[RMDB]
RNA sequence: GGGAACGACUCGAGUAGAGUCGAAAAAGACAUUAUUAGCCACAUUUUGCGAAUCAAUCUGGUUAAAGUUAAUUGGGUUAAUAGGUGUGUUAAAGAUGACCUGGAUUUUAUAACCACGAUCGCGCUCCAUUCAGAGCGCAUUCGUGCGCUCUGAAUGAAAAGAAACAACAACAACAAC
Reactivity to 2A3 in 0.01 (KOAc 150mM, MgCl2 10mM, bicine 150mM(pH8.5), 24C), signal-to-noise 2, nucleotides 027 to 126: a000g050a000c010a000u000u080a020u020u050a040g030c000c000a130c010a050u070u060u050u190g020c020g070a030a060u060c020a020a100u070c090u080g010g010u060u040a130a110a030g010u050u120a070a060u090u080g020g020g010u030u020a050a030u020a120g060g040u060g000u010g010u060u100a140a110a000g080a080u070g020a020c000c020u030g040g000a050u070u050u040u110a130u040a040a000c010c000a010c060g010a010u040c030g000c020g000c040u010c030
Reactivity to DMS in 0.01 (KOAc 150mM, MgCl2 10mM, bicine 150mM(pH8.5), 24C), signal-to-noise 5, nucleotides 027 to 126: a080g010a060c030a050u000u000a030u000u010a030g010c020c010a090c060a080u010u000u000u010g010c030g010a090a060u000c070a100a060u010c170u010g010g010u000u000a030a080a120g000u010u000a020a050u000u000g010g020g000u000u000a020a040u000a050g010g030u000g010u000g010u000u000a060a080a150g010a100u010g010a050c050c020u000g000g000a100u000u000u000u010a090u010a080a070c020c010a040c130g000a030u000c060g020c140g000c070u010c040